[RMDB]
RNA sequence: GGGAACGACUCGAGUAGAGUCGAAAAGCAGGGCAAGCCUAUUGGUAUGUUCUUCCCUUAUGACAUCGAACUUGUCACAGGAAAGCAAAAUAUUCUCCUGCGCAAGUAUGGCCGUGGUGGUUAUCACAGAGGAUUAAGUUCGCUUAAUCCAAAAGAAACAACAACAACAAC
Reactivity to 2A3 in 0.01 (KOAc 150mM, MgCl2 10mM, bicine 150mM(pH8.5), 24C), signal-to-noise 9, nucleotides 027 to 129: g070c010a000g000g010g000c020a040a060g010c030c010u160a280u150u260g010g010u070a090u090g030u010u030c000u020u010c010c000c000u030u110a220u090g050a040c040a050u090c130g050a030a050c000u020u030g080u190c030a000c010a070g010g010a040a040a050g080c190a150a070a130a080u260a140u050u120c110u000c020c010u010g000c010g000c010a000a040g020u040a080u080g050g000c030c010g020u040g010g030u030g020g060u080u090a090u120c070a030c010a040g100a020
Reactivity to DMS in 0.01 (KOAc 150mM, MgCl2 10mM, bicine 150mM(pH8.5), 24C), signal-to-noise 9, nucleotides 027 to 129: g010c140a000g000g010g040c080a010a300g000c030c020u040a100u030u080g060g010u000a090u030g010u050u010c090u020u020c000c020c000u030u080a050u010g020a060c090a050u040c170g030a040a040c040u010u010g000u030c030a080c070a040g020g000a030a060a100g000c250a110a100a140a130u030a080u060u000c090u000c050c020u000g010c160g010c040a030a030g010u000a060u000g040g000c000c010g030u000g040g020u000g010g010u000u010a080u010c050a000c110a050g010a300